[RMDB]
RNA sequence: GGGAACGACUCGAGUAGAGUCGAAAACGUUGUGGCAGCAUUCAAGAUUCUGGUUAUUUCCGCUUUGUCAGCAAUGUUGCUGAAGCUCACAGGCCUGUGGUCUAUUUUAAUGGACUACCUGAAGAAGGUCAGUCAUCAUAUUCGUAUGAUGACUGACAAAAGAAACAACAACAACAAC
Reactivity to 2A3 in 0.01 (KOAc 150mM, MgCl2 10mM, bicine 150mM(pH8.5), 24C), signal-to-noise 1, nucleotides 027 to 126: c090g090u080u070g020u060g050g000c090a000g000c030a010u100u110c000a060a000g010a080u100u050c050u060g080g070u120u130a160u030u230u010c030c030g070c040u050u120u070g060u050c010a000g000c040a000a180u160g010u110u110g010c000u000g030a010a010g080c010u010c020a090c020a060g000g110c000c000u080g060u010g080g010u000c010u030a030u080u160u070u130a110a070u090g040g010a040c000u020a040c050c040u090g040a030a040g020a060a000g150
Reactivity to DMS in 0.01 (KOAc 150mM, MgCl2 10mM, bicine 150mM(pH8.5), 24C), signal-to-noise 2, nucleotides 027 to 126: c110g040u010u000g040u000g000g010c020a030g030c030a030u000u050c110a160a050g000a070u000u000c060u000g030g010u010u010a120u020u000u010c060c050g030c100u000u000u010g030u000c060a040g000c040a050a090u010g010u000u010g040c020u010g000a080a080g000c030u000c060a090c050a080g000g000c110c080u010g030u000g000g020u000c010u000a030u000u010u030u010a040a050u000g000g000a040c000u000a040c000c090u000g030a100a090g020a100a120g010